[RMDB]
RNA sequence: GGGAACGACUCGAGUAGAGUCGAAAAGCAAAGAAAUUUUAUCCCAAUAUGGCGAAGCGUGCAAGUCGAAUAAAGCUAAUGCUGCUAGCGAGCACGCGAGCCCUAGCAGACUCCUAGCGAGAAAAAACUAGUUGUCAUUGUUCGCAAUGACAACUAGAAAAGAAACAACAACAACAAC
Reactivity to DMS in 0.01 (KOAc 150mM, MgCl2 10mM, bicine 150mM(pH8.5), 24C), signal-to-noise 2, nucleotides 027 to 126: g020c220a070a150a010g000a070a130a230u000u030u000u000a070u000c000c000c000a180a150u000a050u000g000g030c000g000a120a250g000c020g050u000g000c000a130a230g020u000c180g020a170a110u000a020a180a060g020c030u020a000a130u000g020c140u000g000c010u000a080g010c040g000a280g020c000a030c020g000c000g010a230g000c020c000c240u000a020g010c050a020g000a160c020u000c030c010u000a110g000c060g000a080g000a000a060a070a070a060a110
Reactivity to 2A3 in 0.01 (KOAc 150mM, MgCl2 10mM, bicine 150mM(pH8.5), 24C), signal-to-noise 1, nucleotides 027 to 126: g040c020a010a120a130g200a040a190a040u130u220u100u110a110u180c020c000c020a030a070u200a150u060g010g010c030g060a060a020g000c030g010u000g020c020a070a070g120u030c040g070a070a080u160a190a080a020g000c030u010a110a020u250g060c120u030g000c010u000a000g010c030g030a040g020c000a000c000g030c000g030a010g000c000c010c000u010a000g030c020a070g050a130c000u030c010c020u070a040g030c000g070a050g000a060a030a010a000a030a000
An RNA of 177 nucleotides, treated with DMS and 2A3 and read out base by base. The RNA was probed in 150 mM KOAc, 10 mM MgCl2 and 150 mM bicine (pH 8.5) at 24 C. For DMS the reverse transcriptase was MarathonRT. 2A3 adducts were read by reverse transcription with SuperScript II with manganese. It was measured as part of the RMDB library M2PK90. For 2A3, 962 sequencing reads were counted.